This 207-nucleotide RNA was probed chemically with DMS and 2A3.
RNA sequence: GGGAACGACUCGAGUAGAGUCGAAAAAAAAAAUGACGUGUUGCUUCAGUAAACCAUCUCCUGGUAGUAGUUGGAGAACACACCGGCUUUACACGUAGGUACCCACAUGAACAGCAGCACGUAGACGGAGAGCAUCAUCGCUAGGUAUAUGAUGACCAAGACUCGAAAUAUUCGUAUUUCGAGUCUUAAAAGAAACAACAACAACAAC
Reactivity to DMS in 0.01 (KOAc 150mM, MgCl2 10mM, bicine 150mM(pH8.5), 24C), signal-to-noise 2, nucleotides 027 to 156: a010a040a020a060a040a050u010g000a080c030g030u000g010u000u020g020c000u000u000c060a050g010u000a030a040a010c040c020a060u000c020u000c010c020u000g000g020u000a110g020u000a100g020u000u010g020g010a120g000a090a070c090a050c040a080c010c030g000g000c010u000u000u000a050c050a120c050g050u000a050g030g010u000a060c020c020c000a100c140a090u000g000a050a060c130a060g020c030a060g010c010a020c020g020u000a060g010a090c020g000g010a100g010a080g030c020a060u000c020a040u000c040g070c060u000a040g010g030u000a070u010a050u000g000a050u000g010a140c030c040
Reactivity to 2A3 in 0.01 (KOAc 150mM, MgCl2 10mM, bicine 150mM(pH8.5), 24C), signal-to-noise 3, nucleotides 027 to 156: a040a000a000a000a000a000u090g050a010c010g000u000g000u000u000g020c000u070u060c010a090g040u080a030a060a060c020c010a080u030c030u050c030c040u050g000g050u060a050g010u040a000g020u040u060g010g010a100g050a090a010c050a000c010a030c010c020g000g000c000u040u020u100a040c100a020c070g050u050a040g100g000u090a140c000c100c050a070c060a110u120g030a070a020c010a110g010c000a000g000c010a010c020g000u000a020g030a020c050g060g020a040g000a000g060c010a030u000c000a010u040c040g030c130u100a040g000g080u050a040u010a040u060g000a030u080g040a020c060c090
The DMS profile rests on 5,557 reads.
Source: RMDB library OK3TST, as collected in RNAgym.
2A3 adducts were read by reverse transcription with SuperScript II with manganese.